[RMDB]
RNA sequence: GGGAACGACUCGAGUAGAGUCGAAAAACGGUCAUACGUGACCGAACGUGUCCUGCCAGUGGUUUUACCCUAUGGUAGGUUACGUCAUGCUGUUCUACCACAGGGUAGAACCACGGACGGGAUGCAAGUUUAAAGAGUGGUUCGCCACUCUUUAAACAAAAGAAACAACAACAACAAC
Reactivity to 2A3 in 0.01 (KOAc 150mM, MgCl2 10mM, bicine 150mM(pH8.5), 24C), signal-to-noise 9, nucleotides 027 to 126: a010c010g000g000u010c000a010u040a100c260g110u030g000a000c000c000g010a030a010c070g010u010g010u010c000c000u000g010c000c020a080g000u010g010g020u000u010u010u010a010c000c000c000u010a020u020g010g000u000a010g010g070u170u110a020c020g030u040c030a060u240g090c090u140g020u040u030c000u000a000c000c000a010c010a020g000g000g010u000a000g000a000a000c000c000a000c000g000g000a020c000g000g000g000a000u010g000c030a060a050
Reactivity to DMS in 0.01 (KOAc 150mM, MgCl2 10mM, bicine 150mM(pH8.5), 24C), signal-to-noise 4, nucleotides 027 to 126: a120c010g000g000u010c010a040u000a090c170g040u010g010a010c000c000g000a030a030c110g010u000g010u000c010c010u000g000c000c010a070g030u000g000g000u000u000u010u000a010c020c000c010u000a090u000g010g000u000a000g000g000u010u010a000c050g020u030c230a150u030g010c130u030g020u010u020c000u000a000c000c000a030c060a010g010g010g010u010a000g010a010a000c010c010a000c010g000g000a040c000g000g000g000a020u010g010c030a100a090
The data come from the RNA Mapping Database (RMDB), libraries RFM100 and RFMREP. An RNA of 177 nucleotides, treated with 2A3 and DMS and read out base by base. For DMS the reverse transcriptase was MarathonRT. High DMS reactivity at an A or C suggests that its Watson-Crick edge is free. The RNA was probed in 150 mM KOAc, 10 mM MgCl2 and 150 mM bicine (pH 8.5) at 24 C.